[RMDB]
Structure probing data (2A3 and DMS) for a 177-nucleotide construct. Conditions: 150 mM KOAc, 10 mM MgCl2 and 150 mM bicine (pH 8.5), 24 C. The data come from the RNA Mapping Database (RMDB), library 15KREP. DMS adducts were read by reverse transcription with MarathonRT. The DMS profile rests on 21,471 reads.
RNA sequence: GGGAACGACUCGAGUAGAGUCGAAAAGGGGCGCUGUUUGUAGGAAGCAUGCUACAGAGUACAGAGAGUAUAUGGAAGCAUAUAAUCUUGUCUCUGCAUCAGGUUUCCGCCUUUGGUGUUAUAAGACCACAAGAAUAAUGUUCGCAUUAUUCUUGUGAAAAGAAACAACAACAACAAC
Reactivity to 2A3 in 0.01 (KOAc 150mM, MgCl2 10mM, bicine 150mM(pH8.5), 24C), signal-to-noise 6, nucleotides 027 to 126: g040g000g010g000c020g020c030u050g040u100u070u090g070u090a080g000g000a010a000g010c010a010u010g000c000u000a010c000a010g010a010g030u110a010c030a010g230a000g000a000g110u000a010u000a000u020g020g040a080a030g100c010a000u000a000u000a010a030u000c000u000u020g000u010c000u000c000u000g000c010a020u010c010a000g030g000u000u020u000c000c000g030c000c000u070u030u040g040g010u030g020u100u090a180u040a180a050g050a050c020
Reactivity to DMS in 0.01 (KOAc 150mM, MgCl2 10mM, bicine 150mM(pH8.5), 24C), signal-to-noise 7, nucleotides 027 to 126: g010g010g010g020c050g020c030u000g010u000u000u000g020u010a110g020g000a020a020g010c010a050u000g010c040u000a040c010a010g000a010g010u010a010c010a070g010a030g010a040g010u000a000u000a010u000g000g000a190a120g000c010a010u000a010u000a010a040u000c000u000u000g000u000c000u000c000u000g000c030a010u000c010a010g010g010u000u000u000c000c010g010c090c060u000u000u000g010g010u000g010u000u000a090u010a100a120g000a160c170